[RMDB]
RNA sequence: GGGAACGACUCGAGUAGAGUCGAAAAGGAGUGUUCAAACUGAUCCGUUAGCCCCGGCAGAUUGAGCAAAGUGUCCAUAAUCACCGCGCUGCCCGUACUUUGGCCAAUGACAGACCAUGAAUCCGGAGAGACUAUAGCGAUUCGUCGCUAUAGUCUCAAAAGAAACAACAACAACAAC
Reactivity to 2A3 in 0.01 (KOAc 150mM, MgCl2 10mM, bicine 150mM(pH8.5), 24C), signal-to-noise 2, nucleotides 027 to 126: g050g020a070g040u030g020u050u070c000a040a080a030c030u040g010a190u020c010c000g010u040u110a030g000c020c040c020c000g030g020c030a030g020a060u050u060g030a050g050c010a060a090a020g110u110g060u050c030c010a040u140a050a070u120c010a010c100c010g010c010g000c070u050g000c000c000c000g020u080a080c000u100u120u060g020g050c000c000a040a010u070g050a070c020a060g050a090c010c000a080u110g000a080a070u050c010c010g020g010a080
Reactivity to DMS in 0.01 (KOAc 150mM, MgCl2 10mM, bicine 150mM(pH8.5), 24C), signal-to-noise 3, nucleotides 027 to 126: g000g010a110g030u000g020u000u000c020a030a080a090c040u000g010a060u020c030c020g020u000u000a180g020c110c130c260c050g010g020c010a020g000a110u000u010g000a080g000c030a020a090a090g020u000g020u000c030c020a070u000a050a120u000c030a040c070c050g000c080g000c030u000g020c040c010c030g010u010a050c090u000u010u020g020g010c000c010a040a050u000g000a070c120a070g010a110c040c030a050u000g010a070a190u010c020c020g000g020a300
The record gives the reactivity of an RNA of 177 nucleotides to 2A3 and DMS.
Source: RMDB library OK2TST, as collected in RNAgym.
Conditions: 150 mM KOAc, 10 mM MgCl2 and 150 mM bicine (pH 8.5), 24 C.
For DMS the reverse transcriptase was MarathonRT.